Record summary:
Structure probing data (2A3 and DMS) for a 177-nucleotide construct.

[RMDB]
RNA sequence: GGGAACGACUCGAGUAGAGUCGAAAAAGUGAGUUAGAAGAAAUUAAAGAACAACAAUAAGGGGUCAAUUUAUGAUGCAACAAACAUUAUCGCAUUACUUUGGGUAUGAAACAUUUCGACCAGGACACUCUUAAACGCCAUUCGUGGCGUUUAAGAGAAAAGAAACAACAACAACAAC
Reactivity to 2A3 in 0.01 (KOAc 150mM, MgCl2 10mM, bicine 150mM(pH8.5), 24C), signal-to-noise 3, nucleotides 027 to 126: a000g150u120g060a020g020u180u170a080g070a130a000g080a030a050a130u200u200a180a190a070g160a110a020c050a000a000c000a010a080u210a170a050g000g000g000g040u000c070a060a030u030u020u040a080u100g010a010u050g020c050a080a040c070a100a160a000c010a030u090u180a130u210c080g000c060a030u120u080a080c080u040u060u070g090g000g000u140a070u060g040a010a120a000c020a000u050u120u120c080g000a030c000c010a010g000g000a000c000a010
Reactivity to DMS in 0.01 (KOAc 150mM, MgCl2 10mM, bicine 150mM(pH8.5), 24C), signal-to-noise 3, nucleotides 027 to 126: a070g030u010g000a130g000u000u000a050g020a070a160g020a100a120a030u040u020a050a160a090g010a140a170c120a120a070c140a050a090u030a070a110g000g000g000g000u010c030a010a060u040u020u040a090u020g020a010u040g010c030a060a060c200a060a090a110c120a140u010u030a060u000c050g000c010a020u010u000a060c120u010u010u030g000g010g000u020a060u050g000a030a030a050c130a060u020u010u020c070g000a040c040c040a090g000g000a140c200a070
Overview:
The RNA was probed in 150 mM KOAc, 10 mM MgCl2 and 150 mM bicine (pH 8.5) at 24 C. For DMS, 3,216 sequencing reads were counted.